Overview:
An RNA of 207 nucleotides, treated with DMS and read out base by base. The DMS profile rests on 3,976 reads.
RNA sequence: GGGAACGACUCGAGUAGAGUCGAAAAUCCGACUCUCAUAGGCUCUCCAACCCAACUCCUACUCAAUACGUCCUCGUCGUACAGAACGGUAACAUGUUUUCCGGACAUCCGCGCUUGGGUAUACGAGAAAGGCGUAGAUUAUUCGUAAUCUACGCAAAGCUAGUCCAUAAUUCGUUAUGGACUAGCUAAAAGAAACAACAACAACAAC
Reactivity to DMS in 0.01 (KOAc 150mM, MgCl2 10mM, bicine 150mM(pH8.5), 24C), signal-to-noise 2, nucleotides 027 to 156: u020c050c010g030a080c010u010c010u000c030a100u000a140g010g010c030u010c030u000c030c030a080a160c030c020c050a090a170c010u000c020c010u010a030c050u010c040a090a100u000a030c030g000u000c020c010u010c020g020u000c040g040u000a120c040a140g000a030a090c030g010g010u000a070a060c100a100u010g000u000u010u000u000c050c020g020g010a080c040a080u010c010c020g000c010g000c080u000u000g000g010g030u010a060u010a050c060g000a100g030a070a070a070g020g010c000g010u000a000g000a040u000u000a060u000u010c240g010u000a020a020u000c000u000a000c000g040c000a000a020